Background: This 207-nucleotide RNA was probed chemically with 2A3 and DMS. For 2A3 the reverse transcriptase was SuperScript II with manganese. Values are in units of 0.01, from 0 to 300, in steps of 10. For DMS the reverse transcriptase was MarathonRT. The reactions ran in a buffer of 150 mM KOAc, 10 mM MgCl2 and 150 mM bicine (pH 8.5), at 24 C.

RNA sequence: GGGAACGACUCGAGUAGAGUCGAAAAAACUCAGCUAGGGAGAGUAUAAAAUUCAUGUUGACGAGACCUAGACGAAACACAGAGGAAAAUUAUUAAUCACUGGAUAGUAUUAGUAAUGACUCUGUGUAAAACUCUUCUACGUUCGCGUAGAAGAGAACUUAUUGAAUCUGUUCGCAGAUUCAAUAAGAAAAGAAACAACAACAACAAC
Reactivity to 2A3 in 0.01 (KOAc 150mM, MgCl2 10mM, bicine 150mM(pH8.5), 24C), signal-to-noise 5, nucleotides 027 to 156: a000a000c010u010c010a010g010c000u010a010g010g010g000a020g000a010g020u050a100u100a300a030a020a020u140u120c120a090u180g060u100u080g070a030c050g010a010g010a050c000c000u000a000g010a020c010g020a000a040a000c010a000c000a000g010a020g000g040a090a180a070a020u010u000a010u010u000a000a000u010c030a000c030u050g070g080a150u290a300g000u020a000u000u010a000g010u000a000a010u010g020a010c000u000c000u000g000u010g010u000a000a000a000a000c000u000c000u000u000c000u000a000c000g030u010u060c250g000c000g060u000a000g000a000a000g000a000g010a000a010
Reactivity to DMS in 0.01 (KOAc 150mM, MgCl2 10mM, bicine 150mM(pH8.5), 24C), signal-to-noise 2, nucleotides 027 to 156: a130a040c010u000c030a100g020c020u000a020g020g030g010a100g000a130g040u000a070u000a080a060a040a110u010u000c090a110u010g010u000u000g010a110c040g020a220g010a140c000c000u000a060g010a260c060g010a170a120a070c010a030c000a010g000a040g000g000a110a090a060a060u000u000a000u000u010a020a030u000c060a070c050u000g010g000a160u010a100g020u000a040u000u010a010g010u000a000a020u000g000a150c010u010c000u000g030u000g020u000a000a010a050a080c000u000c000u000u000c000u000a010c000g020u020u010c300g020c020g080u000a000g010a010a000g000a000g000a020a060